[RMDB]
An RNA of 177 nucleotides, treated with DMS and 2A3 and read out base by base. For 2A3, 41,926 sequencing reads were counted. For 2A3 the reverse transcriptase was SuperScript II with manganese. For DMS, 42,543 sequencing reads were counted. Source: RMDB library OK1LIB, as collected in RNAgym.
RNA sequence: GGGAACGACUCGAGUAGAGUCGAAAAACUUCCAAUGGUUCCGUGGGACGGCGAGGAGAGAGCAUGUGGAGCAGGACGGUUCCACCGGCAUAUACUGAACAAGGAUUGCCAGGGGCAUCUGUCCCCGGUAGUCAUUAUGAUUCGUCAUAAUGACUACAAAAGAAACAACAACAACAAC
Reactivity to DMS in 0.01 (KOAc 150mM, MgCl2 10mM, bicine 150mM(pH8.5), 24C), signal-to-noise 9, nucleotides 027 to 126: a090c180u010u010c010c010a120a100u030g000g010u010u000c030c040g020u020g020g000g010a080c080g010g000c050g010a080g010g010a080g010a090g010a070g020c050a060u010g000u010g010g010a050g010c050a100g000g000a080c100g010g010u000u010c010c020a070c040c060g000g000c020a040u030a070u020a130c040u000g000a100a070c190a110a040g000g000a090u010u000g000c010c010a090g010g000g000g010c070a080u020c080u020g010u020c010c000c010c100g010
Reactivity to 2A3 in 0.01 (KOAc 150mM, MgCl2 10mM, bicine 150mM(pH8.5), 24C), signal-to-noise 9, nucleotides 027 to 126: a000c050u110u030c020c000a050a120u140g070g010u100u030c030c030g030u110g020g030g030a060c040g030g020c050g020a050g050g020a040g010a020g000a010g030c040a060u080g040u090g080g020a030g020c040a040g060g090a030c040g030g000u040u020c010c030a060c030c020g010g000c030a020u110a010u050a180c030u050g040a100a030c060a150a050g050g020a090u050u070g010c010c020a060g010g000g000g000c010a070u040c090u110g090u130c000c000c000c000g020